[RMDB]
RNA sequence: GGGAACGACUCGAGUAGAGUCGAAAACCGGCGGUUGACCCGGUAGGUCCCGCCGGGGGUGUGCACCCAGGGCAGCAUGCGCAGGAGCCAACGCGAGGUGAUGCCCUGCAUCUGCGGAGCGGACUUGCGUAAAAGAUAAGUUCGCUUAUCUUUUACGAAAAGAAACAACAACAACAAC
Reactivity to 2A3 in 0.01 (KOAc 150mM, MgCl2 10mM, bicine 150mM(pH8.5), 24C), signal-to-noise 9, nucleotides 027 to 126: c000c000g000g000c020g020g030u150u290g040a080c010c020c030g130g120u150a100g030g010u000c010c000c000g000c000c000g000g000g000g010g010u090g020u060g050c040a050c010c010c010a010g010g020g000c010a010g010c010a030u110g040c040g000c040a050g030g160a060g080c040c040a060a040c050g010c030g050a050g050g050u050g010a050u060g010c010c000c010u010g000c010a060u020c010u030g030c030g030g020a040g010c030g000g030a040c020u040u080g010
Reactivity to DMS in 0.01 (KOAc 150mM, MgCl2 10mM, bicine 150mM(pH8.5), 24C), signal-to-noise 9, nucleotides 027 to 126: c000c010g000g000c040g010g010u010u030g000a030c030c000c160g020g020u030a120g010g010u000c010c010c010g010c000c010g010g000g000g000g010u010g010u010g010c090a110c050c100c020a060g000g000g010c020a040g010c050a040u010g010c030g010c020a100g010g010a180g020c110c110a080a090c080g000c060g000a100g000g010u000g000a130u010g000c010c020c020u010g010c070a060u010c060u010g010c060g010g000a110g010c040g000g000a070c030u000u010g010
Chemical mapping of a 177-nucleotide RNA with 2A3 and DMS. The RNA was probed in 150 mM KOAc, 10 mM MgCl2 and 150 mM bicine (pH 8.5) at 24 C. For 2A3 the reverse transcriptase was SuperScript II with manganese.